[RMDB]
RNA sequence: GGGAACGACUCGAGUAGAGUCGAAAAGGGGUUAGCGUUUGCAAAACGCUGUUAUUGCAAUGAUCUGGAUUUAGCGCAAGUAGGUCCGAAAUCCAGAUCAACAUUUCGGAGCUCCGCGCUAAUAAAAGCAGUAGACUACAUUCGUGUAGUCUACUGCAAAAGAAACAACAACAACAAC
Reactivity to 2A3 in 0.01 (KOAc 150mM, MgCl2 10mM, bicine 150mM(pH8.5), 24C), signal-to-noise 2, nucleotides 027 to 126: g010g010g020g010u080u100a000g000c050g000u050u030u150g190c110a070a060a030a030c040g000c050u030g060u100u070a160u080u100g040c070a040a080u090g010a040u020c020u010g050g020a040u040u030u010a000g020c010g000c060a100a090g060u100a030g180g160u000c000c040g010a020a020a000u010c010c000a010g010a050u020c000a000a000c000a000u000u000u010c030g020g030a020g040c000u000c010c010g010c020g040c020u000a080a020u040a070a190a000a010
Reactivity to DMS in 0.01 (KOAc 150mM, MgCl2 10mM, bicine 150mM(pH8.5), 24C), signal-to-noise 2, nucleotides 027 to 126: g000g000g020g020u030u010a050g030c030g020u000u020u020g030c230a060a070a030a030c040g000c060u010g010u010u010a030u010u000g010c080a050a110u000g010a070u000c040u000g000g000a120u000u000u000a040g000c110g010c030a130a090g000u020a040g010g010u010c030c010g000a020a030a020u010c080c080a080g010a110u000c090a030a060c150a050u000u000u000c020g010g000a080g010c000u010c110c120g010c010g010c000u000a000a030u000a070a060a090a080

Source: RMDB library M2PK90, as collected in RNAgym. Structure probing data (2A3 and DMS) for a 177-nucleotide construct. Reactivities are given for positions 27 through 126. High DMS reactivity at an A or C suggests that its Watson-Crick edge is free. 2A3 is a SHAPE reagent: it acylates the 2'-hydroxyl of flexible nucleotides of all four kinds. For 2A3, 1,356 sequencing reads were counted.